This 177-nucleotide RNA was probed chemically with 2A3. It was measured as part of the RMDB library OK1LIB. The reactions ran in a buffer of 150 mM KOAc, 10 mM MgCl2 and 150 mM bicine (pH 8.5), at 24 C. For 2A3, 591 sequencing reads were counted.

RNA sequence: GGGAACGACUCGAGUAGAGUCGAAAAGGCCCAAGCAGCUGACACUUCAAUUCCUGGUUCUGAUACCACUGAGAGCGUAACCUUGGUGCCUCAGUUUUGUUAGUUUAUCAAACCAUUCUGAAGAUUACUAUCGGACGUGCUUCGGCACGUCCGAUAGAAAAGAAACAACAACAACAAC
Reactivity to 2A3 in 0.01 (KOAc 150mM, MgCl2 10mM, bicine 150mM(pH8.5), 24C), signal-to-noise 1, nucleotides 027 to 126: g030g000c040c000c000a090a000g060c040a000g000c010u040g000a010c010a060c010u000u000c040a000a300u040u050c000c000u020g040g000u000u210c050u050g010a040u040a100c000c120a030c100u020g020a020g000a030g000c010g060u190a070a040c000c170u070u210g100g020u140g000c000c010u040c030a010g000u000u050u000u120g080u060u080a110g000u000u030u150a010u000c040a050a000a000c060c020a060u040u030c040u110g010a080a070g130a070u000u190a050